[RMDB]
RNA sequence: GGGAACGACUCGAGUAGAGUCGAAAAGGUAUCCACUUCGGUGGAUACCAAAGGCGAUCCCAGCAUCAGGGAACAACAACAAUAGAUGCAUCCCAAACGCCAAAAUUCCGGAUUUCGAUCCGGAAAAUACCUAAAGGACAUUCGUGUCCUUUAGGUAAAAAGAAACAACAACAACAAC
Reactivity to DMS in 0.01 (KOAc 150mM, MgCl2 10mM, bicine 150mM(pH8.5), 24C), signal-to-noise 5, nucleotides 027 to 126: g000g010u000a000u000c000c000a010c000u000u020c190g030g030u000g000g010a000u000a000c000c010a020a040a080g020g020c020g010a120u000c010c000c020a120g020c020a020u000c030a160g000g010g020a100a090c100a100a060c160a070a070c120a080a090u010a100g010a030u000g020c010a160u000c020c010c000a070a120a210c050g000c010c020a070a040a110a160u010u000c000c000g000g000a020u000u000u010c140g010a020u000c010c000g020g010a000a000a040a110
Reactivity to 2A3 in 0.01 (KOAc 150mM, MgCl2 10mM, bicine 150mM(pH8.5), 24C), signal-to-noise 4, nucleotides 027 to 126: g000g000u010a000u000c000c000a000c000u050u070c160g120g000u000g000g000a000u000a000c000c010a020a030a000g000g000c000g000a080u040c010c000c020a010g010c010a010u020c010a010g030g050g080a120a140c050a070a010c020a030a020c020a080a140u050a150g030a020u020g000c000a100u030c000c000c000a030a050a010c020g000c000c020a040a040a020a080u060u020c010c000g010g020a020u060u040u120c210g060a020u030c000c010g000g000a000a020a000a000